The record gives the reactivity of an RNA of 207 nucleotides to 2A3 and DMS. The data come from the RNA Mapping Database (RMDB), library M2RFPK. Values cover nucleotides 27 to 156. Conditions: 150 mM KOAc, 10 mM MgCl2 and 150 mM bicine (pH 8.5), 24 C.
[RMDB]
RNA sequence: GGGAACGACUCGAGUAGAGUCGAAAAGAAAGAAAGAAUGCUGACCCUUCUGCUGACGGAUCUUGUGGAGCACCACAGUGCAGAAGGGGAGAGAAGCUUUAAUGCCGACCGUCUGGGCAGCCUUGAAAAAACGGAUUCUUCUUCGGAAGAAUCCGAAUCUACGUGAUAAGUUCGCUUAUCACGUAGAAAAAGAAACAACAACAACAAC
Reactivity to 2A3 in 0.01 (KOAc 150mM, MgCl2 10mM, bicine 150mM(pH8.5), 24C), signal-to-noise 2, nucleotides 027 to 156: g050a030a040a000g070a030a120a020g050a070a030u090g010c030u060g110a050c000c000c000u000u010c000u000g010c010u020g020a020c020g030g060a120u160c080u150u070g020u030g000g020a120g110c060a110c090c000a020c010a010g050u050g050c000a000g000a010a000g000g000g010g000a000g000a000g010a020a000g010c010u080u110u080a110a060u110g000c020c010g010a070c010c000g020u000c040u090g000g030g000c000a010g000c020c010u060u100g040a070a070a050a010a010a000c010g000g000a010u020u000c000u000u000c010u040u090c190g060g010a010a000g000a000a000u010c000c000g000a000a000
Reactivity to DMS in 0.01 (KOAc 150mM, MgCl2 10mM, bicine 150mM(pH8.5), 24C), signal-to-noise 2, nucleotides 027 to 156: g000a090a090a080g000a120a120a080g020a120a050u010g030c060u000g030a090c020c000c010u000u010c000u000g010c000u010g000a110c100g000g000a100u020c030u010u010g000u000g030g000a190g050c170a100c030c010a020c010a040g000u000g000c020a030g030a020a000g010g030g030g000a030g030a090g010a160a140g020c030u000u000u000a080a100u020g020c020c010g030a090c020c040g010u000c090u010g020g000g050c000a020g000c030c040u000u020g000a000a060a040a090a040a130c010g010g000a010u000u010c010u010u000c010u010u020c300g050g000a060a000g010a040a000u000c000c000g020a030a000